[RMDB]
RNA sequence: GGGAACGACUCGAGUAGAGUCGAAAAAAAAAGGAACUUCCCGGCAAAUCCUCCUGUCUGGUGCUUGCGCUCAAAUUUGCCAGAUGCGUAAUCGCGAAAAAGUUCCAUUAAUGAGAGGAGGAAAAAACAUCAAGAUACCUUUCGAGGUAUCUUGAUGAAAAGAAACAACAACAACAAC
Reactivity to DMS in 0.01 (KOAc 150mM, MgCl2 10mM, bicine 150mM(pH8.5), 24C), signal-to-noise 1, nucleotides 027 to 126: a000a010a100a150a020g000g000a070a030c030u000u010c030c000c000g030g000c200a090a010a040u020c000c000u000c000c010u010g020u000c030u000g000g010u010g010c120u000u000g000c060g050c020u000c020a070a040a120u010u000u010g020c140c050a080g000a020u000g000c010g000u010a020a050u000c060g030c020g010a080a070a030a060a060g000u000u000c010c000a140u010u000a090a070u000g000a040g000a010g060g040a030g000g010a030a010a050a090a110a050